[RMDB]
RNA sequence: GGGAACGACUCGAGUAGAGUCGAAAACAGGGCGUCGCCAACUUCUAUGCCGCCGAUCUCUGGCCUGGGCUCCUGCUUUGGACAGCUGCUUCGCUCGCCUUCGCCGGCGUGCAUGCGGUGCUCUGGACGGUGCCUCAGCAUUCGUGCUGAGGCACCGAAAAGAAACAACAACAACAAC
Reactivity to 2A3 in 0.01 (KOAc 150mM, MgCl2 10mM, bicine 150mM(pH8.5), 24C), signal-to-noise 2, nucleotides 027 to 126: c000a000g010g000g010c010g000u030c000g020c020c050a100a130c170u280u150c060u070a010u060g020c000c020g000c000c000g030a150u030c080u070c050u080g010g000c040c070u020g050g000g050c040u030c020c020u060g060c020u220u230u180g060g130a090c060a050g030c030u110g030c010u110u110c040g000c010u040c050g020c020c050u080u080c020g020c140c010g000g000c000g030u060g000c000a000u160g000c030g000g040u000g000c000u000c000u000g030g020a010